This 177-nucleotide RNA was probed chemically with DMS. Reactivities are rounded to 0.1 and cut off at 0 and 3. Source: RMDB library TTRDEL, as collected in RNAgym. Reactivities are given for positions 27 through 126.
[RMDB]
RNA sequence: GGGAACGACUCGAGUAGAGUCGAAAAGAUAUGGAGAGUAGGGAGCAACGUUCGGAAACGAACGAAUUGCUUUGAUCUACCUCCUAAGUCAAACUGUUUUCUCCAGGUUCGCCUGGAGAAAACAGAAUCUGCAUAACAACUUCGGUUGUUAUGCAGAAAAAGAAACAACAACAACAAC
Reactivity to DMS in 0.01 (KOAc 150mM, MgCl2 10mM, bicine 150mM(pH8.5), 24C), signal-to-noise 1, nucleotides 027 to 126: g000a000u010a230u010g000g000a050g030a220g030u000a050g010g010g010a020g010c000a040a070c010g000u000u010c030g010g010a040a080a120c010g050a020a000c010g010a070a130u000u000g000c010u000u000u010g000a090u040c000u000a000c000c000u000c010c000u000a010a130g000u010c010a110a100a240c000u000g000u000u000u000u000c010u020c000c000a000g000g010u000u000c150g000c000c010u020g010g020a030g000a000a000a000a060c010a000g000a070a070